[RMDB]
RNA sequence: GGGAACGACUCGAGUAGAGUCGAAAAAAGAGUUUCUCUGUUCUCUAAAAUAAAAUCAGAGUGGUGGAGUCAUUAUGACCCUCUUAGAGUUUCCAGUUUCUCUAAAAAACUGGUGGCGAGCCUGCUCAAAAUCAUUAGACCUUCGGGUCUAAUGAAACCACUAUCUAUUGUUCGCAAUAGAUAGUGGAAAAGAAACAACAACAACAAC
Reactivity to 2A3 in 0.01 (KOAc 150mM, MgCl2 10mM, bicine 150mM(pH8.5), 24C), signal-to-noise 2, nucleotides 027 to 156: a000a000g000a000g000u000u010u010c010u010c010u000g020u050u000c000u000c000u020a130a200a080a100u060a050a020a060a010u210c000a000g020a030g000u060g000g050u040g020g060a220g060u010c020a070u020u300a080u300g000a000c000c020c000u000c030u050u130a050g000a000g010u000u000u010c000c000a010g000u010u020u020c000u010c040u130a010a010a010a010a010a010c000u010g000g000u010g010g000c020g000a020g060c040c080u060g010c000u030c110a030a100a030a050u010c000a000u000u000a010g000a000c000c000u010u090c270g110g000g000u020c000u000a000a000u000g010a010a000a010

This 207-nucleotide RNA was probed chemically with 2A3. Conditions: 150 mM KOAc, 10 mM MgCl2 and 150 mM bicine (pH 8.5), 24 C. The 2A3 profile rests on 1,189 reads. The data come from the RNA Mapping Database (RMDB), library M2RFPK.